[RMDB]
RNA sequence: GGGAACGACUCGAGUAGAGUCGAAAAUGCCCAGGUCGGACCGCGAGGAGGUGGAGAUGCCAUGCCGACCCGAAGAGGAAAGAAGGACGCGGACGCGAACCUGUGAGUGGAAACCCGCUUUAUUCACGUAGUGUAAGACCUUCGGGUCUUACACUACAAAAGAAACAACAACAACAAC
Reactivity to DMS in 0.01 (KOAc 150mM, MgCl2 10mM, bicine 150mM(pH8.5), 24C), signal-to-noise 1, nucleotides 027 to 126: u020g000c010c010c020a080g020g000u000c000g000g000a080c060c050g020c070g020a140g030g010a100g020g050u030g000g010a070g040a090u000g010c100c060a060u010g010c000c000g000a150c050c010c040g020a050a070g000a060g010g000a030a040a100g020a110a090g010g040a200c110g040c060g000g040a070c150g010c010g000a080a080c040c010u000g050u000g010a080g020u010g000g020a090a120a200c030c010c010g000c080u000u020u000a060u000u000c180a140c130